[RMDB]
RNA sequence: GGGAACGACUCGAGUAGAGUCGAAAAGACGCCUUUAGAAGAAGAGGCUAGGGGGUAUUCCGGUGUGGGAUACUUGGUAAUAUGCAACGCUAAUUGCAUAAGAUUGUAGGACGGAAUUUACAGUCUUUAGAGAUAAGCACGUUCGCGUGCUUAUCAACAUAUCACCCGCGUUCGCGCGGGUGAUAUGAAAAGAAACAACAACAACAAC
Reactivity to 2A3 in 0.01 (KOAc 150mM, MgCl2 10mM, bicine 150mM(pH8.5), 24C), signal-to-noise 1, nucleotides 027 to 156: g050a000c030g000c020c020u100u070u070a150g020a170a020g010a030a020g020a020g010g000c000u030a080g040g010g000g020g000u020a020u050u010c050c000g030g210u270g080u140g030g000g000a000u010a060c010u000u110g020g000u070a050a070u050a090u080g010c000a010a010c100g000c200u140a150a080u060u000g050c010a000u000a010a050g040a030u050u090g030u030a010g040g000a010c090g040g050a050a060u060u070u120a060c010a000g000u000c000u020u140u030a060g030a000g000a060u000a000a000g010c000a000c000g000u020u070c200g020c000g100u010g000c000u000u000a000u000c000a010a000
An RNA of 207 nucleotides, treated with 2A3 and read out base by base.
The reactions ran in a buffer of 150 mM KOAc, 10 mM MgCl2 and 150 mM bicine (pH 8.5), at 24 C.